Source: RMDB library M2RFPK, as collected in RNAgym.
The record gives the reactivity of an RNA of 207 nucleotides to 2A3 and DMS.
For DMS, 3,428 sequencing reads were counted.
RNA sequence: GGGAACGACUCGAGUAGAGUCGAAAAGGCGUAGCCGACAACAUGCCCAGGUAGCCCAGACCUUCAAGGCUACGGUGCGUUGCGACGCACGGUCAGAUUCUUCACAACGACGUUCACCGCGUCUUCUACAACCGGCAAAGAUUCGUCUUUGCCGGAAGACUGACAAAUGAUUCGUCAUUUGUCAGUCAAAAGAAACAACAACAACAAC
Reactivity to 2A3 in 0.01 (KOAc 150mM, MgCl2 10mM, bicine 150mM(pH8.5), 24C), signal-to-noise 6, nucleotides 027 to 156: g050g000c140g110u090a060g030c020c010g070a030c040a100a060c010a080u160g030c000c020c010a000g040g000u010a010g000c020c080c240a060g000a030c010c010u030u020c010a000a030g010g000c000u000a000c010g000g010u000g000c000g010u010u100g040c160g140a000c010g010c000a000c020g000g000u000c000a000g020a090u200u120c070u150u150c090a050c040a220a060c090g020a000c000g060u170u200c080a030c130c040g000c010g010u000c030u050u040c030u100a120c020a110a080c010c000g000g000c000a000a000a010g000a010u050u060c120g090u010c050u000u000u000g000c000c000g000g000a000a000
Reactivity to DMS in 0.01 (KOAc 150mM, MgCl2 10mM, bicine 150mM(pH8.5), 24C), signal-to-noise 2, nucleotides 027 to 156: g030g000c000g020u010a140g030c010c000g000a250c110a090a070c040a070u010g000c040c000c070a090g030g010u000a050g010c030c000c110a200g000a160c040c030u000u010c090a050a300g010g000c010u000a030c000g010g020u010g000c000g000u000u000g030c090g010a180c010g030c030a040c020g020g030u010c030a170g010a230u000u010c040u000u010c090a100c070a030a130c040g010a030c010g010u000u000c090a110c100c030g020c050g010u000c020u000u010c040u000a100c130a110a210c010c000g020g050c000a010a020a020g040a080u000u010c300g030u000c000u000u010u010g000c010c000g030g000a010a050